Conditions: 150 mM KOAc, 10 mM MgCl2 and 150 mM bicine (pH 8.5), 24 C.
An RNA of 177 nucleotides, treated with DMS and 2A3 and read out base by base.
DMS adducts were read by reverse transcription with MarathonRT.
RNA sequence: GGGAACGACUCGAGUAGAGUCGAAAAGAUAUGGAUGCCUACCCAGCAUCGAUCUCGGAAACGAGGGAGCUGUGGUAGGGCAUCCUAAGUCAAAACCAAGUUAUUUGGUUCGCCAAAUAACUUGGAACGACUGAAGAUUGUUCGCAAUCUUCAGUCGAAAAGAAACAACAACAACAAC
Reactivity to DMS in 0.01 (KOAc 150mM, MgCl2 10mM, bicine 150mM(pH8.5), 24C), signal-to-noise 2, nucleotides 027 to 126: g030a070u010a300u010g010g000a000u000g020c000c010u000a010c000c000c000a030g030c000a300u010c140g000a030u000c010u000c000g010g020a170a120a190c000g010a030g000g010g000a020g000c010u000g010u020g020g020u010a000g030g030g010c020a000u000c000c020u000a030a050g000u000c010a070a080a140a230c000c000a000a000g000u000u010a000u000u000u010g000g010u010u000c280g000c000c010a010a030a000u000a010a000c000u000u000g010g000a030a060
Reactivity to 2A3 in 0.01 (KOAc 150mM, MgCl2 10mM, bicine 150mM(pH8.5), 24C), signal-to-noise 2, nucleotides 027 to 126: g010a020u070a060u160g000g020a000u000g000c000c010u000a000c010c010c010a000g000c020a100u300c060g020a100u010c010u000c000g020g050a140a160a090c010g010a000g000g020g000a010g000c020u080g090u300g200g000u030a110g080g000g000c000a010u000c000c000u000a070a020g010u000c040a020a020a030a130c000c000a010a030g010u000u000a000u000u000u010g050g010u050u090c280g060c060c000a010a000a000u020a000a010c000u000u010g000g000a010a010

Values cover nucleotides 27 to 126.